[RMDB]
The data come from the RNA Mapping Database (RMDB), library 15KLIB. This 170-nucleotide RNA was probed chemically with DMS and 2A3.
RNA sequence: GGGAACGACUCGAGUAGAGUCGAAAAUGUUUCCUCUUCCUAGGUCCGGAGUCGACCUCCAUCUGAUCCGUCCUGGCUCUCUUCGCCGGGGGAGCUCCCUCCCCAUCCUUGUCCUUUCUUAUUAUUCCUACCUCUACCUUCGGGUAGAGGAAAAGAAACAACAACAACAAC
Reactivity to DMS in 0.01 (KOAc 150mM, MgCl2 10mM, bicine 150mM(pH8.5), 24C), signal-to-noise 7, nucleotides 027 to 129: u060g030u040u030u030c020c020u030c060u000u010c030c040u030a070g000g000u020c070c090g040g020a060g030u030c020g020a160c010c040u000c030c040a030u060c000u000g000a120u020c060c070g020u010c050c040u030g020g050c040u030c060u000c070u040u040c080g010c060c040g000g000g010g000g010a090g030c050u000c040c040c020u020c020c000c010c010a120u050c000c040u000u000g020u000c040c050u000u000u000c030u010u020a080u060u040a150u020u010c020c020u000a140
Reactivity to 2A3 in 0.01 (KOAc 150mM, MgCl2 10mM, bicine 150mM(pH8.5), 24C), signal-to-noise 9, nucleotides 027 to 129: u140g020u010u030u020c010c000u010c020u040u020c000c020u040a040g020g030u020c040c040g060g020a040g040u060c020g050a070c000c000u000c000c000a110u040c040u080g030a050u030c010c020g040u030c030c040u020g000g000c010u000c000u000c020u110u100c040g030c030c010g000g000g000g020g010a010g020c020u070c030c000c000u020c010c000c000c000a060u070c010c000u020u060g060u060c020c000u040u100u060c040u050u090a160u080u060a090u050u060c010c000u020a080

Values cover nucleotides 27 to 129. The DMS profile rests on 42,265 reads. The reactions ran in a buffer of 150 mM KOAc, 10 mM MgCl2 and 150 mM bicine (pH 8.5), at 24 C. For DMS the reverse transcriptase was MarathonRT. For 2A3, 53,679 sequencing reads were counted. 2A3 adducts were read by reverse transcription with SuperScript II with manganese.